[RMDB]
RNA sequence: GGGAACGACUCGAGUAGAGUCGAAAAGAUAUGGAGCUUGCGCAGCACAUACUAUUGGUACAUAGAAGUCGGAAACGACUUCUAUGUACCAACGAAUAUGUGAACUACUGCCUAAGCUCCUAAGUCAGUAUGUCUGUCAGUUCGCUGACAGACAUACAAAAGAAACAACAACAACAAC
Reactivity to DMS in 0.01 (KOAc 150mM, MgCl2 10mM, bicine 150mM(pH8.5), 24C), signal-to-noise 2, nucleotides 027 to 126: g000a040u000a300u000g000g000a000g010c000u000u000g040c300g010c000a000g000c020a010c010a000u000a000c040u000a250u000u000g000g000u020a000c000a020u000a020g000a090a000g010u000c010g010g000a170a060a220c010g000a010c000u000u000c000u000a000u000g000u000a010c010c000a000a000c040g000a090a140u000a000u000g020u000g030a060a010c090u010a300c020u000g000c000c050u000a040a040g000c000u000c000c000u000a010a030g000u000c020a130